[RMDB]
RNA sequence: GGGAACGACUCGAGUAGAGUCGAAAACAGACUCACUUCGGUGAGUCUGAAAGGAGUAAUCGAUAGCGAAAACUACCAGAUUACUCAAGGGUAGUGAGAAAAAAAGUUAGAGCUUCGGCUCUAACAAUCACGAUAUUCAGUUCGCUGAAUAUCGUGAAAAAGAAACAACAACAACAAC
Reactivity to DMS in 0.01 (KOAc 150mM, MgCl2 10mM, bicine 150mM(pH8.5), 24C), signal-to-noise 3, nucleotides 027 to 126: c020a010g000a000c000u000c000a010c010u000u030c160g020g010u000g000a010g010u000c000u000g000a010a080a150g010g010a030g000u000a000a000u000c000g000a030u000a020g000c010g000a130a080a160a180c010u010a010c000c000a190g020a000u010u000a000c010u010c000a080a060g010g020g020u000a060g010u000g020a140g010a020a010a060a060a080a080a140g010u000u000a000g000a020g000c010u000u010c260g010g020c000u000c000u000a010a000c000a060a080
Reactivity to 2A3 in 0.01 (KOAc 150mM, MgCl2 10mM, bicine 150mM(pH8.5), 24C), signal-to-noise 2, nucleotides 027 to 126: c010a010g000a000c000u000c010a010c010u070u090c150g100g060u000g010a000g000u000c000u000g010a020a010a000g060g000a010g000u000a010a030u000c030g040a120u110a050g110c130g110a060a030a050a070c000u010a000c020c000a020g000a020u040u000a010c000u000c030a030a050g100g020g020u040a070g030u080g110a100g190a040a130a030a000a010a010a050g000u000u010a010g000a000g000c020u040u070c300g040g010c010u000c000u000a010a000c000a000a000
This 177-nucleotide RNA was probed chemically with DMS and 2A3. For 2A3, 1,973 sequencing reads were counted.